[RMDB]
RNA sequence: GGGAACGACUCGAGUAGAGUCGAAAAGGCGCCGCUGGCCUCGUUAAAAGCGGCACAAAUGUAAUUGCCAACAACGAUUACGAAUACGCAAUGGCAGCCUAAUUAGGCUUGCCGCACUGAUUGGCUGACGUCAGAUACGCCGACCAGUGACAAACUUGUUCGCACUUAUGUUCGCAUAAGUGCGAACAAAAGAAACAACAACAACAAC
Reactivity to 2A3 in 0.01 (KOAc 150mM, MgCl2 10mM, bicine 150mM(pH8.5), 24C), signal-to-noise 2, nucleotides 027 to 156: g020g040c020g030c000c000g000c020u060g140g010c000c030u100c030g060u050u040a000a060a030a050g000c010g000g050c030a000c000a000a060a030u100g020u030a010a010u040u010g110c080c080a040a100c030a040a010c070g020a000u040u060a030c010g020a120a110u060a070c050g040c130a050a190u170g000g010c000a000g020c000c000u230a300a300u170u210a010g000g000c000u010u160g020c020c000g000c010a000c000u040g000a100u020u070g010g000c020u050g040a030c020g010u070c000a010g010a160u120a140c060g000c000c000g030a010c000c000a000g000u000g060a030c020a030a050a010c030u070u020
An RNA of 207 nucleotides, treated with 2A3 and read out base by base.
Values are in units of 0.01, from 0 to 300, in steps of 10.
It was measured as part of the RMDB library RSTRND.
For 2A3 the reverse transcriptase was SuperScript II with manganese.
The RNA was probed in 150 mM KOAc, 10 mM MgCl2 and 150 mM bicine (pH 8.5) at 24 C.